Chemical mapping of a 177-nucleotide RNA with 2A3 and DMS. For 2A3 the reverse transcriptase was SuperScript II with manganese. The 2A3 profile rests on 1,019 reads.

RNA sequence: GGGAACGACUCGAGUAGAGUCGAAAACUGAGCAUUGAUGUCUCCUUCGACAGGAGAUGCGUUUGCCUCCUCCGAGGGAGGAGUGUCUUUGAGCGUUUGACCCUUGGGGGGCAUGAGGGGCGUUUGACGUAAUCCUCCGUUUCGACGGAGGAUUACGAAAAGAAACAACAACAACAAC
Reactivity to 2A3 in 0.01 (KOAc 150mM, MgCl2 10mM, bicine 150mM(pH8.5), 24C), signal-to-noise 3, nucleotides 027 to 126: c080u110g000a030g110c060a130u070u140g070a080u200g190u000c000u050c010c050u120u150c090g140a100c020a060g000g020a010g030a010u030g000c020g030u050u120u120g020c000c020u030c000c000u020c000c000g050a030g080g070g000a020g000g040a000g010u060g040u060c130u070u180u240g070a160g000c010g020u000u060u110g130a130c000c000c000u000u000g000g000g000g000g000g060c030a050u120g060a050g000g060g000g000c060g010u030u100u110g080a050
Reactivity to DMS in 0.01 (KOAc 150mM, MgCl2 10mM, bicine 150mM(pH8.5), 24C), signal-to-noise 1, nucleotides 027 to 126: c020u000g000a070g000c000a030u000u020g000a170u030g000u010c030u010c020c040u020u010c240g000a180c270a100g000g010a030g010a050u000g020c030g020u040u010u000g000c000c040u000c000c000u000c000c040g020a080g000g000g000a110g020g020a010g020u010g030u000c000u000u050u030g010a120g000c040g000u000u000u000g000a300c000c010c020u030u000g000g000g000g000g000g020c230a010u010g000a080g000g010g010g000c040g000u000u050u000g000a170
Reactivities are given for positions 27 through 126. The reactions ran in a buffer of 150 mM KOAc, 10 mM MgCl2 and 150 mM bicine (pH 8.5), at 24 C.